[RMDB]
RNA sequence: GGGAACGACUCGAGUAGAGUCGAAAAGAUCACUGCACCUAGGCUAUAAAUCACUUGCAAUGAUGGUCGGAUCUUUAUGAAGGAAGUGCUAAUCAUGUACACUGCCCAUAAAAAGACAAUCAUGCCAGACUCGAGUUUUAUUCGUAAAACUCGAGUCAAAAGAAACAACAACAACAAC
Reactivity to DMS in 0.01 (KOAc 150mM, MgCl2 10mM, bicine 150mM(pH8.5), 24C), signal-to-noise 2, nucleotides 027 to 126: g020a040u000c030a030c050u000g000c030a070c030c030u040a120g050g000c040u000a110u020a060a130a090u010c030a130c100u010u020g000c070a070a120u000g010a040u000g010g000u000c040g020g020a060u000c090u000u010u010a010u000g000a210a090g000g010a070a010g010u000g020c070u000a050a130u010c230a120u000g010u010a080c020a020c030u010g030c030c000c010a030u010a040a020a070a090a200g010a060c070a030a040u010c050a060u020g020c050c110a150
Reactivity to 2A3 in 0.01 (KOAc 150mM, MgCl2 10mM, bicine 150mM(pH8.5), 24C), signal-to-noise 1, nucleotides 027 to 126: g040a010u070c010a000c120u040g000c050a030c070c000u060a070g020g000c080u060a010u090a260a160a050u150c080a030c100u020u050g000c030a000a300u040g040a000u030g040g000u000c030g050g150a170u030c060u000u020u010a070u060g040a140a100g020g000a010a010g000u000g020c010u050a080a110u180c100a020u120g020u070a010c020a020c030u030g030c010c000c020a010u060a030a060a010a000a000g000a000c000a020a000u060c010a040u020g000c000c010a000
Description: An RNA of 177 nucleotides, treated with DMS and 2A3 and read out base by base. The reactions ran in a buffer of 150 mM KOAc, 10 mM MgCl2 and 150 mM bicine (pH 8.5), at 24 C.